Source information:
Source: RMDB library OK1LIB, as collected in RNAgym. This 177-nucleotide RNA was probed chemically with DMS and 2A3. DMS adducts were read by reverse transcription with MarathonRT. For 2A3 the reverse transcriptase was SuperScript II with manganese. The RNA was probed in 150 mM KOAc, 10 mM MgCl2 and 150 mM bicine (pH 8.5) at 24 C.
RNA sequence: GGGAACGACUCGAGUAGAGUCGAAAAGACGCCUGAUGGCGAACGUGCGCAAGAUAAGAAUGGUGGUAUAUACUGCCUAGAAUAACUAAUGGACGGCAGAGCGCACGUACCACCAAGGUCCACCAGAAUGCAUGAUCAGUUUCGACUGAUCAUGCAUAAAAGAAACAACAACAACAAC
Reactivity to DMS in 0.01 (KOAc 150mM, MgCl2 10mM, bicine 150mM(pH8.5), 24C), signal-to-noise 4, nucleotides 027 to 126: g050a200c000g040c000c000u000g010a120u070g020g010c000g000a110a010c010g020u000g010c000g050c040a190a120g010a130u000a080a050g020a130a150u020g010g000u030g000g000u000a100u010a090u020a160c000u000g000c030c000u000a180g000a120a010u050a110a140c300u070a100a050u000g000g000a100c200g000g000c020a010g000a080g020c020g000c010a000c020g020u000a010c040c050a130c090c110a110a120g010g000u050c010c000a060c010c010a170g030a190
Reactivity to 2A3 in 0.01 (KOAc 150mM, MgCl2 10mM, bicine 150mM(pH8.5), 24C), signal-to-noise 5, nucleotides 027 to 126: g030a010c020g020c020c030u160g170a090u300g020g000c020g000a020a010c000g000u010g000c000g000c000a050a080g080a270u140a190a020g070a120a060u110g000g000u020g000g050u030a050u010a000u010a110c000u010g000c000c000u020a000g070a080a140u220a120a010c130u170a150a080u160g070g050a010c020g010g000c000a010g000a020g020c000g000c000a000c000g000u000a010c010c000a040c020c000a020a000g050g040u010c010c000a010c000c010a030g060a180